The record gives the reactivity of an RNA of 177 nucleotides to 2A3. Conditions: 150 mM KOAc, 10 mM MgCl2 and 150 mM bicine (pH 8.5), 24 C. For 2A3 the reverse transcriptase was SuperScript II with manganese.
RNA sequence: GGGAACGACUCGAGUAGAGUCGAAAAAUGUGCUUCCGUCCCGAGGUGUCGGCGUGAUCGAGUUGCGUGGGGAGUCGCUGACCCCGGGCUAUAUCACGAUGGGCGGCUUCAUCUCGGCCCAAGAUGACGUAUGCCUGCGGUUCGCCGCAGGCAUACGAAAAGAAACAACAACAACAAC
Reactivity to 2A3 in 0.01 (KOAc 150mM, MgCl2 10mM, bicine 150mM(pH8.5), 24C), signal-to-noise 1, nucleotides 027 to 126: a010u090g040u000g070c040u030u010c100c090g050u130c060c000c000g000a130g170g050u130g030u000c000g020g050c050g000u040g000a270u100c000g040a050g080u090u270g210c110g000u160g000g080g000g030a080g060u140c040g030c070u120g190a000c000c000c000c000g000g000g000c000u130a110u000a000u040c000a000c010g020a050u040g080g010g030c000g000g020c130u040u000c000a060u000c000u000c000g010g000c020c000c000a000a010g030a000u000g000a000
For 2A3, 564 sequencing reads were counted.